[RMDB]
RNA sequence: GGGAACGACUCGAGUAGAGUCGAAAAAGGGACACCUCACUCACAUUUUACCAACAGAGUGAGAGUGAGGUUAACCUCUCAUUUCUGUUGGUGAACGCAGAAGUUAGAGGUUGAGAACACUGACAACUGCGUUCAUAGUUGUGAGUGUUCUGUCCCACCUCACCUACGGAUUCGUCCGUAGGUGAGGAAAAGAAACAACAACAACAAC
Reactivity to 2A3 in 0.01 (KOAc 150mM, MgCl2 10mM, bicine 150mM(pH8.5), 24C), signal-to-noise 1, nucleotides 027 to 156: a000g030g000g000a000c010a000c000c000u000c000a000c000u010c000a040c000a020u070u070u080u110a060c020c060a000a020c000a000g000a000g010u000g000a010g030a010g000u180g030a100g150g000u050u030a010a000c010c000u000c000u020c000a090u190u300u000c010u000g030u030u000g030g050u040g000a000a000c010g000c000a000g020a130a040g000u000u000a060g020a090g080g000u000u000g000a030g000a040a000c000a000c000u030g000a000c000a030a050c000u000g000c060g000u000u050c010a010u090a040g140u040u000g020u000g010a010g030u030g000u000u000c000u000g010u000c000c000c000a050
The record gives the reactivity of an RNA of 207 nucleotides to 2A3. The 2A3 profile rests on 838 reads. The reactions ran in a buffer of 150 mM KOAc, 10 mM MgCl2 and 150 mM bicine (pH 8.5), at 24 C. Source: RMDB library OK3TST, as collected in RNAgym.